[RMDB]
The data come from the RNA Mapping Database (RMDB), library OK1LIB. Structure probing data (DMS and 2A3) for a 177-nucleotide construct. In probing experiments dimethyl sulfate is read out at A N1 and C N3, which are open when not base-paired.
RNA sequence: GGGAACGACUCGAGUAGAGUCGAAAAGCCAUAGCCCAAGUCGACUAGCACCCGUAGGUCGGGCUGAAUCAGCUCGGCUAUUGGGGUCCCUACGAAGGGGAUGGCGCGAAUCGGCUGCAACAGCGGCAGGCCCGUAUGUAUUCGUACAUACGGGCCUAAAAGAAACAACAACAACAAC
Reactivity to DMS in 0.01 (KOAc 150mM, MgCl2 10mM, bicine 150mM(pH8.5), 24C), signal-to-noise 3, nucleotides 027 to 126: g000c090c020a090u060a080g070c010c000c000a180a010g000u030c020g000a000c010u050a300g000c050a300c000c000c000g020u020a040g020g010u010c040g010g010g010c000u040g060a210a230u020c000a000g020c020u000c000g000g000c000u010a020u050u000g000g000g000g000u000c000c030c030u010a140c230g010a130a140g000g000g050g000a030u000g020g030c160g010c010g020a100a190u000c000g010g040c010u010g000c070a070a180c100a060g000c080g000g070c030
Reactivity to 2A3 in 0.01 (KOAc 150mM, MgCl2 10mM, bicine 150mM(pH8.5), 24C), signal-to-noise 7, nucleotides 027 to 126: g040c010c000a090u110a040g020c000c000c000a020a000g030u010c000g000a010c020u030a010g000c010a050c020c000c000g040u040a050g010g080u040c010g000g030g010c000u010g040a050a210u300c050a040g010c000u000c000g000g020c010u050a160u060u240g000g000g000g000u020c000c010c000u120a210c130g230a240a110g030g000g000g010a010u090g120g080c070g000c000g050a000a030u010c010g040g010c010u030g000c020a080a100c000a170g070c050g040g000c000